[RMDB]
RNA sequence: GGGAACGACUCGAGUAGAGUCGAAAAUACCGCAGGCCUGCGGUGCGGCAGUGUGGAGACCUGCCGUAAGCCGGGUUGUUUUGACAACCGGGAGAAAGCGUAUGCGGAGGCAGCGCUUUCAGGGUCUAAAAGUAUGGGAUCUUCGGAUCCCAUACAAGACAUAUAUUCGCUUCGGCGAAUAUAUGUCAAAAGAAACAACAACAACAAC
Reactivity to 2A3 in 0.01 (KOAc 150mM, MgCl2 10mM, bicine 150mM(pH8.5), 24C), signal-to-noise 3, nucleotides 027 to 156: u070a000c000c000g000c000a010g000g010c010c010u030g000c000g000g000u000g000c000g000g000c000a000g010u040g010u100g300g080a080g050a050c000c000u000g000c000c000g000u000a000a010g020c010c000g060g020g000u060u020g030u040u180u080u270g110a010c000a000a000c000c000g010g000g000a010g000a000a000a000g010c000g000u020a300u180g010c070g010g080a050g300g000c000a000g010c000g000c000u000u000u000c000a000g000g000g000u000c000u010a010a080a030a080g000u000a010u000g000g000g000a000u000c010u010u040c150g090g000a000u000c000c000c000a000u000a000c000a010a000

Structure probing data (2A3) for a 207-nucleotide construct.
It was measured as part of the RMDB library M2RFPK.
Reactivities are given for positions 27 through 156.
2A3 is a SHAPE reagent: it acylates the 2'-hydroxyl of flexible nucleotides of all four kinds.
For 2A3, 3,016 sequencing reads were counted.
The RNA was probed in 150 mM KOAc, 10 mM MgCl2 and 150 mM bicine (pH 8.5) at 24 C.
Reactivities are rounded to 0.1 and cut off at 0 and 3.